[RMDB]
RNA sequence: GGGAACGACUCGAGUAGAGUCGAAAACUGGUGGACUUUCUUUGUACUUUGGGAAGAUAGUAGAGCUGUAAUACAAGUUCCAGUCCUGAAGAAGCCCAUCCAUGUGGUAAAGAGAAUUCCCUGCUAAUGGAAACUCUGUCAGGGAUCUGAAACCAUACGCUACGCAAAAUUUCGAUUUUGCGUAGCGAAAAGAAACAACAACAACAAC
Reactivity to 2A3 in 0.01 (KOAc 150mM, MgCl2 10mM, bicine 150mM(pH8.5), 24C), signal-to-noise 2, nucleotides 027 to 156: c000u020g000g000u010g000g010a030c020u130u180u060c010u060u140u180g160u130a200c000u080u060u060g010g020g000a100a050g090a210u110a130g080u120a030g010a020g000c030u010g110u210a100a070u130a160c110a110a020g000u000u040c030c000a010g020u000c000c010u020g010a020a050g000a020a000g000c010c000c000a010u010c020c020a030u110g000u000g000g010u040a080a100a000g050a030g040a140a070u110u040c010c000c000u000g030c040u050a020a060u060g090g030a100a140a060c150u130c020u140g170u260c030a000g000g000g000a020u010c000u000g030a190a010a000c000c000a010u010a010
Annotation:
Structure probing data (2A3) for a 207-nucleotide construct. Values cover nucleotides 27 to 156. High 2A3 reactivity points to a flexible backbone, as in loops and unpaired stretches. The reactions ran in a buffer of 150 mM KOAc, 10 mM MgCl2 and 150 mM bicine (pH 8.5), at 24 C.